[RMDB]
Structure probing data (DMS and 2A3) for a 170-nucleotide construct. 2A3 adducts were read by reverse transcription with SuperScript II with manganese. For DMS the reverse transcriptase was MarathonRT. The RNA was probed in 150 mM KOAc, 10 mM MgCl2 and 150 mM bicine (pH 8.5) at 24 C. Source: RMDB library 15KLIB, as collected in RNAgym.
RNA sequence: GGGAACGACUCGAGUAGAGUCGAAAAACGGCUGUUGGCCAUUAUGUUCAUGCUCGCCUGAAGGGUGGUCUUAUUUUAAAGUUUGACUCUGGCACCGUUAGCAAGACUUCAGACUGGAAGUGCAAGGAUGGCCCGUGCUUCGGCACGGGCAAAAGAAACAACAACAACAAC
Reactivity to DMS in 0.01 (KOAc 150mM, MgCl2 10mM, bicine 150mM(pH8.5), 24C), signal-to-noise 2, nucleotides 027 to 129: a000c050g020g030c000u000g020u010u040g080g090c000c090a030u090u000a070u030g070u030u000c070a040u020g040c060u030c050g040c280c030u030g030a040a030g000g000g000u020g100g000u030c000u000u000a080u050u070u150u040a000a110a050g000u070u030u000g040a000c300u000c000u000g000g000c100a130c190c060g000u000u000a030g000c020a000a000g000a140c070u000u060c010a040g020a060c040u000g300g000a000a000g020u000g060c120a000a010g020g000a020u030g000
Reactivity to 2A3 in 0.01 (KOAc 150mM, MgCl2 10mM, bicine 150mM(pH8.5), 24C), signal-to-noise 2, nucleotides 027 to 129: a000c000g000g080c080u230g000u220u030g050g040c000c060a000u060u100a130u170g080u040u010c000a000u070g000c040u010c000g000c080c020u030g050a000a020g020g000g040u040g000g000u000c000u000u050a210u070u080u010u100a090a100a000g040u000u060u030g040a030c000u000c120u130g070g020c060a020c070c030g010u040u050a000g040c000a020a040g020a020c000u010u010c030a060g050a100c000u040g000g000a000a030g020u000g000c000a000a000g000g000a030u020g180
Overview
The DMS profile rests on 3,663 reads.